[RMDB]
RNA sequence: GGGAACGACUCGAGUAGAGUCGAAAAACUGAGUACCUCCAGAACCUGUAUCUACUCCAAGACCCAGGCCUACACUGGCGCAAACCAAUCCUCACGAUCGGCGACCGAGUCCAGUUCGCAAGCGAAGCAGACACACACGACCACGAUAGCCACCGACGAAAUGUGUUUCUUUCGAGAAACACAUUUCAAAAGAAACAACAACAACAAC
Reactivity to 2A3 in 0.01 (KOAc 150mM, MgCl2 10mM, bicine 150mM(pH8.5), 24C), signal-to-noise 1, nucleotides 027 to 156: a000c060u070g000a010g060u070a110c030c030u050c030c010a050g000a120a080c000c020u000g030u060a050u010c040u080a050c000u050c080c020a080a040g040a050c000c040c000a030g080g000c030c000u070a090c120a030c060u020g070g000c030g000c120a120a050a090c030c020a000a050u000c000c020u060c010a070c030g040a090u030c020g000g020c000g080a050c010c000g020a020g020u040c000c000a010g010u020u010c050g000c060a050a050g080c000g130a110a050g000c040a000g050a070c010a000c000a000c000a020c140g080a010c000c000a040c050g030a030u020a030g000c030c040a040c060c030g120a050c060